The data come from the RNA Mapping Database (RMDB), library OK2TRN.
This 177-nucleotide RNA was probed chemically with 2A3 and DMS.
The RNA was probed in 150 mM KOAc, 10 mM MgCl2 and 150 mM bicine (pH 8.5) at 24 C.
For DMS, 856 sequencing reads were counted.
As a SHAPE reagent, 2A3 marks flexible, mostly unpaired nucleotides at the ribose 2'-OH.

RNA sequence: GGGAACGACUCGAGUAGAGUCGAAAAACGCUGGUACCAAGUCAAAUUAAGCAAAGAAAUUAUGUUUCCAUGGGUAGAAAGACCUCAACUUACGCAGGCUGUCAAGGAAUAACCGCGUCGCGUGUGAGACGCGAUACUCGUUCGCGAGUAUCGCGUCAAAAGAAACAACAACAACAAC
Reactivity to 2A3 in 0.01 (KOAc 150mM, MgCl2 10mM, bicine 150mM(pH8.5), 24C), signal-to-noise 1, nucleotides 027 to 126: a030c000g010c030u070g070g000u010a010c030c030a070a090g030u050c030a070a050a050u150u120a000a040g030c010a110a110a020g100a030a130a020u130u100a090u230g040u020u010u000c000c020a030u040g000g070g080u020a030g140a100a100a000g040a100c000c000u020c020a050a100c000u130u200a020c040g010c020a030g050g010c000u060g030u090c080a050a120g060g020a130a040u080a100a080c010c010g120c050g040u090c090g000c020g000u050g000u000g090a070
Reactivity to DMS in 0.01 (KOAc 150mM, MgCl2 10mM, bicine 150mM(pH8.5), 24C), signal-to-noise 1, nucleotides 027 to 126: a070c090g000c030u010g010g030u020a130c030c010a060a140g010u030c090a110a090a080u000u030a040a070g000c070a050a070a170g010a080a050a060u010u000a030u010g010u000u000u000c000c040a030u000g000g000g020u010a070g010a030a060a080g010a080c010c000u000c040a030a020c030u000u020a070c140g030c060a030g040g000c050u000g010u010c090a080a080g000g000a040a010u000a060a100c070c020g010c140g020u000c040g000c030g000u010g030u010g000a080

2A3 adducts were read by reverse transcription with SuperScript II with manganese.